Description
Chemical mapping of a 207-nucleotide RNA with DMS and 2A3. The reactions ran in a buffer of 150 mM KOAc, 10 mM MgCl2 and 150 mM bicine (pH 8.5), at 24 C. For 2A3 the reverse transcriptase was SuperScript II with manganese.

RNA sequence: GGGAACGACUCGAGUAGAGUCGAAAAUUGAGAAAAGAUACGUCAUCAGAGCACUUUGAGAUUUAUUUCUAAAUGCAGUGCACAUUGAGAAAUACCCAAGAGACACAGGGAAAACUCAGCCAUGAGAACAUCUUCUUUAGAGUAGCUCAUGUGGUUAAUAUUAAAUUAGGUUCGCCUAAUUUAAUAUAAAAGAAACAACAACAACAAC
Reactivity to DMS in 0.01 (KOAc 150mM, MgCl2 10mM, bicine 150mM(pH8.5), 24C), signal-to-noise 2, nucleotides 027 to 156: u000u010g000a120g020a120a110a110a180g000a150u010a020c040g020u030c010a090u000c070a160g010a120g020c020a080c050u010u010u000g000a140g010a150u000u000u010a030u020u000u010c020u020a020a010a060u000g010c030a110g020u000g020c160a100c050a070u000u000g040a050g000a030a040a050u000a100c080c010c000a050a070g000a150g040a210c060a070c050a070g000g040g000a050a090a040a100c050u000c040a130g000c040c020a020u010g000a050g000a060a080c040a130u030c010u010u000c120u000u010u010a100g000a090g010u000a090g020c030u000c010a050u010g010u000g010g000u000u000a060
Reactivity to 2A3 in 0.01 (KOAc 150mM, MgCl2 10mM, bicine 150mM(pH8.5), 24C), signal-to-noise 1, nucleotides 027 to 156: u130u110g030a040g010a000a030a060a060g040a060u030a060c050g030u050c020a050u030c020a000g020a030g120c010a020c090u080u100u080g050a100g020a110u050u110u140a130u170u090u000c020u000a000a020a040u020g020c000a070g040u050g000c060a010c010a050u000u030g020a000g000a020a050a000u060a010c000c000c000a060a060g060a020g010a090c020a000c030a140g030g000g070a060a020a060a080c010u000c020a000g000c010c000a010u040g000a000g020a080a100c020a090u010c000u090u000c000u080u190u110a010g000a010g030u030a020g000c000u000c000a010u020g050u130g070g050u080u090a030
Reactivities are rounded to 0.1 and cut off at 0 and 3.
For DMS the reverse transcriptase was MarathonRT.